[RMDB]
RNA sequence: GGGAACGACUCGAGUAGAGUCGAAAAGCGGAUGGAGCGUCACGUGAGGACUGUGAAGCACAAUGCGAUAUGUUCUGAUUAUAUGGCGAGUUUGCUUAAUGACAUGUUUUUAGCCGAACGGUGUCAAACUUCUUCAUUGGUUCGCCAAUGAAGAAGUAAAAGAAACAACAACAACAAC
Reactivity to 2A3 in 0.01 (KOAc 150mM, MgCl2 10mM, bicine 150mM(pH8.5), 24C), signal-to-noise 8, nucleotides 027 to 126: g040c030g000g020a040u050g030g030a090g050c010g050u030c020a020c070g050u060g090a050g020g050a010c020u050g030u070g100a070a020g000c040a030c040a080a140u210g030c020g030a020u030a040u150g050u030u070c030u040g050a050u070u130a110u060a060u130g040g010c030g010a040g050u020u080u080g060c030u070u090a080a040u150g030a000c010a010u040g010u000u010u010u010u100a020g010c020c010g000a020a010c020g080g000u020g010u010c000a020a070
Reactivity to DMS in 0.01 (KOAc 150mM, MgCl2 10mM, bicine 150mM(pH8.5), 24C), signal-to-noise 7, nucleotides 027 to 126: g010c040g010g020a110u010g020g010a070g020c040g010u010c030a060c120g010u010g010a070g000g010a050c060u000g010u010g000a080a090g020c040a090c110a080a110u030g000c020g000a060u020a040u010g020u010u020c080u010g000a090u010u020a070u020a050u010g000g010c030g010a110g020u010u010u000g010c030u010u010a070a120u020g000a030c020a030u000g000u000u010u000u010u000a170g020c180c100g000a020a010c030g020g030u000g000u010c040a060a110